[RMDB]
Overview
This 177-nucleotide RNA was probed chemically with DMS and 2A3. Reactivities are rounded to 0.1 and cut off at 0 and 3. The RNA was probed in 150 mM KOAc, 10 mM MgCl2 and 150 mM bicine (pH 8.5) at 24 C. DMS adducts were read by reverse transcription with MarathonRT. For 2A3, 4,268 sequencing reads were counted.
RNA sequence: GGGAACGACUCGAGUAGAGUCGAAAACGUCGCGUGUUCGCACGCGACGAAACGAGAAUCGGCAAAUAAGCCGAUCCCAGGCGAUCGUACGCCAUACUCAAAAAAGUCCCUGCUUCGGCAGGGACAACUUCAACAAUUUCUUCGGAAAUUGUUGAAGAAAAGAAACAACAACAACAAC
Reactivity to DMS in 0.01 (KOAc 150mM, MgCl2 10mM, bicine 150mM(pH8.5), 24C), signal-to-noise 2, nucleotides 027 to 126: c030g030u000c000g020c000g080u000g020u010u010c220g030c030a000c000g000c000g020a000c000g020a040a070a070c140g000a090g020a130a080u000c000g000g000c000a150a140a130u000a150a140g010c000c000g000a010u000c010c000c020a230g060g000c000g000a060u000c190g030u000a290c000g020c010c020a070u000a040c040u010c060a010a110a050a060a110a070g000u000c000c000c000u000g000c000u000u000c140g020g000c000a000g000g000g000a000c000a000a040
Reactivity to 2A3 in 0.01 (KOAc 150mM, MgCl2 10mM, bicine 150mM(pH8.5), 24C), signal-to-noise 3, nucleotides 027 to 126: c000g000u000c000g000c010g010u020g060u040u050c260g030c130a010c000g000c000g000a000c000g000a010a010a000c050g020a010g040a050a040u020c010g010g000c040a040a110a300u210a300a070g000c010c020g010a010u000c020c000c000a030g010g000c010g030a100u160c130g120u160a060c000g030c020c000a030u100a080c050u090c080a030a070a050a040a010a040g010u010c000c000c000u010g000c000u030u050c220g070g000c010a000g010g000g010a000c000a000a000